[RMDB]
RNA sequence: GGGAACGACUCGAGUAGAGUCGAAAAUUGAAGGUAAAACAGCCUGUGGGUGAAACACACCCACAGGGCCCAUUGGGCGCUAGCACUAUGGUAUCACGGUACCUUUGUGCGCCUGUUUUACCGAAGGCGGGAGAUGACUUCGGUCAUCUCAAAAGAAACAACAACAACAAC
Reactivity to 2A3 in 0.01 (KOAc 150mM, MgCl2 10mM, bicine 150mM(pH8.5), 24C), signal-to-noise 9, nucleotides 027 to 129: u110u120g050a090a020g010g000u010a000a000a000a000c000a000g010c010c000u000g000u000g000g010g000u010g030a060a120a010c140a010c000a000c040c000c000a000c000a000g000g000g000c000c000c010a110u280u300g000g000g000c020g010c070u090a050g000c000a000c000u020a010u060g010g000u000a000u020c030a020c230g150g000u000a000c000c000u060u130u040g000u000g000c000g000c000c000u000g000u000u000u000u000a000c000c000g000a010a010g050g050c090g060g070
Reactivity to DMS in 0.01 (KOAc 150mM, MgCl2 10mM, bicine 150mM(pH8.5), 24C), signal-to-noise 7, nucleotides 027 to 129: u050u040g000a170a150g030g020u000a000a010a010a010c000a010g030c040c000u000g020u020g010g020g020u000g010a120a150a100c300a240c000a030c000c000c000a020c020a000g000g000g000c000c000c000a090u030u060g020g000g010c010g030c040u010a050g020c000a010c020u000a040u020g000g000u000a000u000c010a100c230g020g000u000a010c010c040u020u030u020g020u010g020c020g020c020c000u000g010u050u010u020u000a000c000c000g020a030a040g030g020c140g010g030